[RMDB]
An RNA of 177 nucleotides, treated with 2A3 and DMS and read out base by base. For DMS the reverse transcriptase was MarathonRT. The reactions ran in a buffer of 150 mM KOAc, 10 mM MgCl2 and 150 mM bicine (pH 8.5), at 24 C. For DMS, 1,168 sequencing reads were counted. As a SHAPE reagent, 2A3 marks flexible, mostly unpaired nucleotides at the ribose 2'-OH. The data come from the RNA Mapping Database (RMDB), library M2PK50.
RNA sequence: GGGAACGACUCGAGUAGAGUCGAAAAACUGCGGUAUUCGUACCGCAGUACAUAAAAAGGAUAAAAUACCUGUAGCCCGAAACGCAAGCGAGCACUACUGGCGCAAGAACCACUUCGGUGGUUCUAACCUCGUAGGAGUAUUCGUACUCCUACGAGGAAAAGAAACAACAACAACAAC
Reactivity to 2A3 in 0.01 (KOAc 150mM, MgCl2 10mM, bicine 150mM(pH8.5), 24C), signal-to-noise 2, nucleotides 027 to 126: a020c000u000g020c000g070g010u010a020u020u040c160g020u060a010c010c000g020c000a000g010u010a010c000a000u260a010a110a000a010a030g120g000a100u270a180a210a050a050u190a190c020c010u050g070u070a020g030c000c000c000g000a070a120a020c050g000c040a010a080g070c010g090a020g020c020a010c110u130a060c030u130g090g020c040g000c040a020a020g000a000a020c000c000a000c020u020u030c190g050g010u000g030g030u010u010c000u010a000a000
Reactivity to DMS in 0.01 (KOAc 150mM, MgCl2 10mM, bicine 150mM(pH8.5), 24C), signal-to-noise 2, nucleotides 027 to 126: a030c000u000g000c000g020g010u000a030u000u020c180g030u000a010c000c000g010c000a000g010u000a030c070a010u010a000a070a070a140a040g010g010a180u000a080a090a110a070u000a110c020c000u000g000u000a140g000c000c010c000g020a040a060a040c120g010c140a020a080g010c040g020a070g050c120a040c080u000a040c100u010g010g030c070g020c090a050a020g000a000a000c000c000a010c000u000u010c220g010g040u000g000g000u000u000c000u000a040a090